[RMDB]
RNA sequence: GGGAACGACUCGAGUAGAGUCGAAAAUGGUUUUACAGAGCAGUGAACACUUCCUUCUCUUGACAGUGGAGGGAUCACAGGCUGCAGUAUUCUUGGCUUAUAUGGCCUGGUGAGCCUAGCACACUGAGAAGCUUAAAGGCUUCGGCCUUUAAGCUUCAAAAGAAACAACAACAACAAC
Reactivity to DMS in 0.01 (KOAc 150mM, MgCl2 10mM, bicine 150mM(pH8.5), 24C), signal-to-noise 2, nucleotides 027 to 126: u030g020g020u010u010u020u020a040c060a160g030a110g030c120a150g000u000g020a090a040c160a110c130u000u040c000c000u000u050c070u000c010u000u010g000a210c030a110g000u000g000g020a140g010g040g000a050u000c040a020c020a130g000g000c010u000g000c160a090g040u030a000u020u000c100u060u060g000g030c050u000u060a170u010a100u010g010g010c000c000u000g000g000u000g000a130g000c010c000u000a090g000c140a220c030a030c000u070g000a260
Reactivity to 2A3 in 0.01 (KOAc 150mM, MgCl2 10mM, bicine 150mM(pH8.5), 24C), signal-to-noise 2, nucleotides 027 to 126: u030g000g000u000u090u040u130a040c120a070g080a030g150c110a050g020u050g110a190a040c070a140c180u100u050c000c000u030u150c080u050c030u070u150g040a060c010a000g020u010g120g000a070g070g060g000a000u000c010a020c000a000g030g000c050u100g000c070a020g030u090a190u120u270c110u080u030g140g000c000u200u040a080u010a090u300g050g000c000c080u060g080g100u100g000a020g010c000c000u040a090g040c060a040c000a000c110u010g040a080